[RMDB]
RNA sequence: GGGAACGACUCGAGUAGAGUCGAAAAAACAGGUUGUAAAGUGUAACCUGUGUGCAUUGGAAAGAAACCAAAACCUGGGCAUGGUUUACUCUCCAUUUUUCUCUUGGUUUGCAUCGUUUAGUGACAACUUGACAAAGGAAUUCGUUCCUUUGUCAAGAAAAGAAACAACAACAACAAC
Reactivity to 2A3 in 0.01 (KOAc 150mM, MgCl2 10mM, bicine 150mM(pH8.5), 24C), signal-to-noise 2, nucleotides 027 to 126: a000a000c020a030g010g010u030u010g060u070a200a200a300g080u130g030u130a030a030c010c000u040g010u010g010u010g000c060a090u000u100g000g030a100a000a020g050a030a020a030c020c020a050a050a040a100c020c040u040g040g050g020c040a020u010g020g050u000u080u040a260c000u010c000u000c000c020a020u050u030u000u030u000c000u000c000u040u060g110g010u070u070u070g020c010a090u020c070g110u120u090u110a080g010u100g020a040c000a030a050
Reactivity to DMS in 0.01 (KOAc 150mM, MgCl2 10mM, bicine 150mM(pH8.5), 24C), signal-to-noise 6, nucleotides 027 to 126: a100a010c010a010g010g010u000u000g010u010a100a110a160g020u010g010u010a020a010c010c000u010g000u000g010u000g020c170a060u010u000g010g000a030a030a040g000a070a030a020c010c010a040a050a120a120c080c050u000g010g010g020c080a200u000g000g000u000u000u000a080c020u000c030u000c000c010a050u000u000u000u000u000c020u000c020u000u000g000g000u000u000u010g020c050a050u000c100g010u000u000u010a100g010u000g000a130c140a070a170